[RMDB]
RNA sequence: GGGAACGACUCGAGUAGAGUCGAAAAUCAUUGGUGAUACUACAUAACUUCGCUAAUUGAUCAUUUUGAUCAAUAUAUCAUUCAAGUUUCUGCCCUAUCAGCUUGAUGGUAGUGUAUUGGCCUACCACAAAGCCCUAGAAUUCGUUCUAGGGCUUUGAAAAGAAACAACAACAACAAC
Reactivity to DMS in 0.01 (KOAc 150mM, MgCl2 10mM, bicine 150mM(pH8.5), 24C), signal-to-noise 4, nucleotides 027 to 126: u020c070a060u010u010g010g010u000g000a060u010a070c120u000a090c140a100u020a080a130c120u010u010c110g000c090u010a090a020u010u000g010a010u030c000a150u050u040u020u020g010a010u000c010a000a010u010a110u010a050u000c030a040u010u010c070a020a020g000u000u000u020c060u010g000c020c020c030u010a060u020c110a070g000c050u000u010g000a080u000g010g000u000a030g020u010g000u010a100u000u000g000g010c050c000u000a030c030c020a120
Reactivity to 2A3 in 0.01 (KOAc 150mM, MgCl2 10mM, bicine 150mM(pH8.5), 24C), signal-to-noise 6, nucleotides 027 to 126: u110c070a060u040u050g000g010u030g010a020u030a080c060u060a060c100a130u200a190a110c100u120u090c050g030c130u080a080a030u040u010g010a000u010c040a080u020u190u240u300g020a010u000c000a010a000u060a010u020a010u030c030a020u110u110c000a010a030g000u000u060u050c050u070g070c010c000c000u080a170u160c120a060g090c020u050u070g040a030u050g080g030u010a010g020u050g020u140a150u060u060g050g010c000c000u000a010c010c010a020

Source: RMDB libraries RFM100 and RFMREP, as collected in RNAgym. The record gives the reactivity of an RNA of 177 nucleotides to DMS and 2A3. Values are in units of 0.01, from 0 to 300, in steps of 10. DMS adducts were read by reverse transcription with MarathonRT.